[RMDB]
RNA sequence: GGGAACGACUCGAGUAGAGUCGAAAAGAUAUGGACCAGGUUCCCGUUGAUGACCUAUAUCGGAAACGAUAUAGCAAGACGGAACUGGUCCUAAGUCAAAGACACUGGAGGUUCGCCUCCAGUGUCACAUCCCCAACAGGUUCGCCUGUUGGGGAUGAAAAGAAACAACAACAACAAC
Reactivity to DMS in 0.01 (KOAc 150mM, MgCl2 10mM, bicine 150mM(pH8.5), 24C), signal-to-noise 4, nucleotides 027 to 126: g010a030u000a300u010g000g020a000c000c000a000g020g020u010u010c160c040c100g020u010u000g020a130u040g000a100c300c000u000a000u000a000u000c000g010g010a220a130a210c000g020a020u000a000u000a000g020c020a080a100g010a030c000g010g010a080a100c000u000g000g010u010c000c000u000a000a070g000u020c030a140a120a120g010a010c000a010c000u010g020g000a030g020g020u000u000c300g010c000c010u000c000c000a000g020u000g010u010c000a050
Reactivity to 2A3 in 0.01 (KOAc 150mM, MgCl2 10mM, bicine 150mM(pH8.5), 24C), signal-to-noise 3, nucleotides 027 to 126: g040a010u110a030u180g000g000a000c010c000a020g130g140u170u120c200c060c040g010u010u070g110a300u090g010a020c000c010u000a000u000a000u000c000g000g000a070a060a010c010g000a000u000a000u010a010g000c030a090a240g020a020c030g020g000a020a010c000u010g000g000u000c000c000u000a010a020g000u010c030a130a000a160g000a000c000a010c000u000g030g010a010g000g050u120u230c300g140c070c000u000c000c000a000g000u000g010u010c000a020